Structure probing data (DMS and 2A3) for a 177-nucleotide construct.
RNA sequence: GGGAACGACUCGAGUAGAGUCGAAAAGAGUUAAUCGGCGUGUUCCACGCAGGCUUUUGUCUUGAACGAUUUACCAUAGAAUAACAAAUUUAUGAUUUUGUGUCUUUGUUUGUUCGGACACAUUAUCCUGUGUCUCUUACUUCGGUAAGAGACACAGAAAAGAAACAACAACAACAAC
Reactivity to DMS in 0.01 (KOAc 150mM, MgCl2 10mM, bicine 150mM(pH8.5), 24C), signal-to-noise 2, nucleotides 027 to 126: g000a170g010u010u040a070a070u030c030g000g010c010g030u020g000u020u020c060c090a140c060g020c040a030g000g000c020u040u020u000u020g000u010c000u000u040g020a120a190c020g010a030u000u000u000a050c050c040a050u000a090g020a090a050u020a170a120c090a070a100a150u000u000u010a020u020g000a000u000u000u000u000g030u000g000u020c040u000u010u030g010u000u000u000g000u000u010c130g060g000a000c000a000c020a020u000u010a040u000c010
Reactivity to 2A3 in 0.01 (KOAc 150mM, MgCl2 10mM, bicine 150mM(pH8.5), 24C), signal-to-noise 4, nucleotides 027 to 126: g050a000g010u050u050a020a010u030c000g010g000c010g000u040g080u200u070c200c030a000c000g000c000a010g000g030c010u060u220u300u300g030u020c000u080u160g070a090a020c010g020a030u000u040u100a070c040c040a060u130a210g180a130a080u220a180a050c070a000a120a160u140u220u140a130u180g010a020u010u000u000u000g010u000g000u000c020u030u070u120g130u080u080u080g060u060u180c080g030g000a000c000a000c000a000u010u000a000u020c010